Conditions: 150 mM KOAc, 10 mM MgCl2 and 150 mM bicine (pH 8.5), 24 C. An RNA of 177 nucleotides, treated with 2A3 and DMS and read out base by base. The 2A3 profile rests on 5,881 reads.
RNA sequence: GGGAACGACUCGAGUAGAGUCGAAAAGGCGAUCAACGGCAACAGUCGGGUCAUGGUGGCCGACGUCUGGGUCGGAUCGAUCCGCGCGAUCAAGUUGAAGAACUGGGUGGCCACGCUGACGCUGAGCACGACGUGAAUAGUUCGCUAUUCACGUCGUAAAAGAAACAACAACAACAAC
Reactivity to 2A3 in 0.01 (KOAc 150mM, MgCl2 10mM, bicine 150mM(pH8.5), 24C), signal-to-noise 6, nucleotides 027 to 126: g060g030c040g040a100u060c060a050a080c060g050g020c020a060a040c020a130g070u050c030g030g020g030u060c060a120u160g170g000u080g060g010c000c010g060a070c010g070u060c060u120g060g020g000u010c000g080g030a050u140c060g010a000u000c020c010g060c030g000c040g020a000u050c070a130a030g050u090u090g130a100a060g040a050a020c020u030g070g020g000u130g030g020c010c000a030c020g050c000u020g000a020c020g000c100u050g010a040g050c060
Reactivity to DMS in 0.01 (KOAc 150mM, MgCl2 10mM, bicine 150mM(pH8.5), 24C), signal-to-noise 5, nucleotides 027 to 126: g010g000c020g000a060u000c050a090a120c070g020g000c050a100a070c110a110g020u010c040g010g010g020u010c020a120u010g020g040u020g000g010c000c000g000a080c040g020u000c050u020g000g010g020u010c030g020g000a120u030c040g010a020u010c010c010g010c300g010c040g000a080u010c060a090a040g030u000u010g000a150a130g030a040a010c000u010g010g030g020u020g000g010c030c060a050c020g010c030u010g010a070c050g000c050u000g000a120g020c110
The data come from the RNA Mapping Database (RMDB), library OK1LIB.